Annotation:
Source: RMDB library OK2TRN, as collected in RNAgym. An RNA of 177 nucleotides, treated with 2A3 and DMS and read out base by base. DMS adducts were read by reverse transcription with MarathonRT. The reactions ran in a buffer of 150 mM KOAc, 10 mM MgCl2 and 150 mM bicine (pH 8.5), at 24 C. For 2A3 the reverse transcriptase was SuperScript II with manganese.
RNA sequence: GGGAACGACUCGAGUAGAGUCGAAAAGGCGUUGCCGUGGCAACUAAACUGUCCUGGUGCUGGUGGGCGUGUCUCUCAUGCUAAUGUAUUAUAAUCAGCGCAUAAUGAGCAGUGAGGACUGGCUGUCAUCCUUAUCAAACUUCGGUUUGAUAAGGAUAAAAGAAACAACAACAACAAC
Reactivity to 2A3 in 0.01 (KOAc 150mM, MgCl2 10mM, bicine 150mM(pH8.5), 24C), signal-to-noise 6, nucleotides 027 to 126: g050g020c070g130u170u060g010c020c020g070u070g070g010c030a060a030c040u120a120a060a090c040u050g050u070c010c020u040g050g000u060g020c020u020g020g030u030g010g020g000c020g040u030g020u000c040u000c020u010c140a020u020g000c010u080a150a060u130g100u120a100u160u130a070u130a140a130u080c030a030g040c020g000c070a020u120a200a120u200g060a030g000c020a020g070u030g060a040g000g020a010c030u030g060g010c010u030g030u060c020
Reactivity to DMS in 0.01 (KOAc 150mM, MgCl2 10mM, bicine 150mM(pH8.5), 24C), signal-to-noise 8, nucleotides 027 to 126: g010g010c130g000u000u000g020c020c040g030u000g010g010c030a030a060c070u010a060a110a090c070u010g000u000c010c020u010g010g010u000g010c030u000g010g010u000g010g000g010c040g020u000g000u010c090u000c080u000c030a030u000g010c030u000a090a090u000g010u010a070u010u000a100u010a100a090u010c070a040g010c100g020c070a050u000a060a060u010g010a060g010c020a040g020u000g000a080g010g000a060c040u000g000g010c020u000g010u010c110